About this RNA: This 207-nucleotide RNA was probed chemically with 2A3 and DMS. Reactivities are given for positions 27 through 156. For DMS the reverse transcriptase was MarathonRT. For 2A3, 1,964 sequencing reads were counted. The RNA was probed in 150 mM KOAc, 10 mM MgCl2 and 150 mM bicine (pH 8.5) at 24 C.
RNA sequence: GGGAACGACUCGAGUAGAGUCGAAAACAGCUCGUGUCGUGAGAUGUUUGGUCAAGUCCUAUAACGAGCGAAACCCUCGUCUUGUGUUGCUCAGACAUGCGCCUAAGGAGAAAGGCUUGAAAACCGAAGUGAGCCAAGGAGCCGAGUGAUGUGCCAGCCCCAUUAUUGAGUUCGCUCAAUAAUGGGGAAAAGAAACAACAACAACAAC
Reactivity to 2A3 in 0.01 (KOAc 150mM, MgCl2 10mM, bicine 150mM(pH8.5), 24C), signal-to-noise 3, nucleotides 027 to 156: c020a020g020c010u010c020g020u040g030u040c060g020u090g050a100g020a080u090g100u150u090u110g090g000u050c020a070a050g030u020c010c020u020a050u080a140a030c030g010a010g040c010g040a070a050a070c010c040c030u030c010g070u050c050u080u120g010u010g000u060u090g030c030u010c020a000g020a110c020a040u110g060c030g010c070c010u060a100a070g050g000a000g020a040a080a000g000g000c010u000u090g110a100a090a050a020c030c040g000a050a000g070u030g040a010g020c000c010a030a010g020g010a040g030c020c010g030a010g010u040g000a050u050g050u070g010c000c050a010g000
Reactivity to DMS in 0.01 (KOAc 150mM, MgCl2 10mM, bicine 150mM(pH8.5), 24C), signal-to-noise 2, nucleotides 027 to 156: c030a160g010c000u010c030g020u000g050u000c080g050u000g010a040g020a060u000g010u010u020u000g040g000u000c040a100a210g000u000c010c010u000a140u000a110a070c030g010a020g030c030g030a090a120a150c050c010c020u000c060g000u000c050u010u030g030u030g000u000u000g010c000u020c050a090g020a110c040a080u000g040c060g020c000c020u020a050a120g010g010a180g040a140a070a100g010g000c000u010u000g000a110a080a130a090c020c020g010a070a100g000u000g000a050g050c040c050a050a080g010g000a090g040c000c020g020a060g020u000g010a110u000g020u000g030c020c010a160g000